An RNA of 177 nucleotides, treated with 2A3 and DMS and read out base by base. Conditions: 150 mM KOAc, 10 mM MgCl2 and 150 mM bicine (pH 8.5), 24 C.

[RMDB]
RNA sequence: GGGAACGACUCGAGUAGAGUCGAAAAAACUCAGGUUCGAAAUUUACAUCAAAUCUUUUAGACCAAGUCAGUGCCUAUACAACUUGGAGGAGCUGGAAGUAAACUUAAUGAGUAUGAUGAUGAUGGAGUUUAUGCUUUUUUUCGAAAAAGCAUAAACAAAAGAAACAACAACAACAAC
Reactivity to 2A3 in 0.01 (KOAc 150mM, MgCl2 10mM, bicine 150mM(pH8.5), 24C), signal-to-noise 3, nucleotides 027 to 126: a000a000c060u060c050a050g030g090u130u080c010g040a000a070a190u160u140u110a050c030a070u060c020a000a060a140u060c000u050u140u110u180a050g020a060c020c010a020a000g030u020c090a040g010u010g130c050c030u060a060u030a200c070a110a040c050u040u060g040g040a030g000g040a060g060c030u020g040g020a080a010g030u060a010a030a100c010u040u060a070a010u140g030a030g090u070a110u160g070a030u050g020a020u060g000a010u040g070g020a090
Reactivity to DMS in 0.01 (KOAc 150mM, MgCl2 10mM, bicine 150mM(pH8.5), 24C), signal-to-noise 5, nucleotides 027 to 126: a100a040c020u000c040a080g010g010u000u000c040g010a070a130a090u010u000u000a080c050a040u020c040a060a130a080u010c020u000u010u000u020a090g010a260c030c010a040a050g010u000c070a090g020u000g010c110c090u000a090u010a070c080a160a040c040u000u000g000g000a120g010g010a050g030c130u000g000g010a030a040g000u000a050a040a050c050u000u000a050a080u000g000a040g000u000a070u020g010a060u000g010a090u000g010a110u000g010g010a270
It was measured as part of the RMDB library OK2TRN. The 2A3 profile rests on 2,583 reads. For 2A3 the reverse transcriptase was SuperScript II with manganese.